[RMDB]
RNA sequence: GGGAACGACUCGAGUAGAGUCGAAAACUCACAGGUCACCUUGGGGAAGUUGCUUUGGCUCUGUUGAAAACUCCAGCCCGGUUUGAUGCUGAUGAGCUCCAUGCUGCCAUGAAGGGCCUUGGAACUGAUUUCUAAGCACAUUCGUGUGCUUAGAAAUAAAAGAAACAACAACAACAAC
Reactivity to 2A3 in 0.01 (KOAc 150mM, MgCl2 10mM, bicine 150mM(pH8.5), 24C), signal-to-noise 3, nucleotides 027 to 126: c000u030c000a050c020a010g030g040u030c020a020c040c010u080u080g010g010g030g060a070a050g060u100u080g040c030u050u050u080g050g000c020u020c030u070g100u110u090g040a080a090a030a020c020u020c010c030a040g030c040c020c010g000g030u020u080u120g030a050u070g020c020u020g020a160u070g050a050g020c010u020c000c000a020u070g030c030u040g020c020c020a090u140g090a100a120g070g010g000c000c030u050u050g040g010a050a050c020u050g030
Reactivity to DMS in 0.01 (KOAc 150mM, MgCl2 10mM, bicine 150mM(pH8.5), 24C), signal-to-noise 6, nucleotides 027 to 126: c030u000c020a150c110a060g010g010u000c030a070c050c030u000u010g020g010g010g010a090a090g010u000u000g020c080u000u010u000g010g000c030u000c040u000g010u000u000g000a100a060a090a070c060u000c040c040a090g000c040c040c080g000g010u000u000u000g010a110u010g020c040u000g000a110u010g010a060g010c040u000c040c030a040u000g000c110u000g010c020c030a080u010g010a130a140g010g010g010c020c030u000u000g000g000a050a080c090u010g000

The record gives the reactivity of an RNA of 177 nucleotides to 2A3 and DMS. It was measured as part of the RMDB library OK2TRN. Conditions: 150 mM KOAc, 10 mM MgCl2 and 150 mM bicine (pH 8.5), 24 C.